Record summary
Structure probing data (DMS) for a 177-nucleotide construct. Conditions: 150 mM KOAc, 10 mM MgCl2 and 150 mM bicine (pH 8.5), 24 C.
[RMDB]
RNA sequence: GGGAACGACUCGAGUAGAGUCGAAAAGAUAUGGAUAAUCUGUUGUGACGAAGAACUCGGAAACGAGGGAGUCAUUACAGAGUUAUCCUAAGUCAAAGGGGCUACACGGUUCGCCGUGUAGCCCCAACAAUAUCCAUGGCUUCGGCCAUGGAUAUUGAAAAGAAACAACAACAACAAC
Reactivity to DMS in 0.01 (KOAc 150mM, MgCl2 10mM, bicine 150mM(pH8.5), 24C), signal-to-noise 1, nucleotides 027 to 126: g000a050u000a300u040g000g000a000u000a000a070u000c010u000g010u000u000g000u000g010a000c000g000a080a180g000a130a130c000u010c000g020g010a120a080a140c040g000a010g020g000g000a060g000u000c000a010u000u000a010c010a020g000a030g000u010u000a000u000c000c010u000a040a090g010u000c030a090a110a140g000g010g000g000c000u000a000c010a000c000g030g030u000u000c230g020c000c000g060u000g010u000a000g000c000c000c010c000a010a020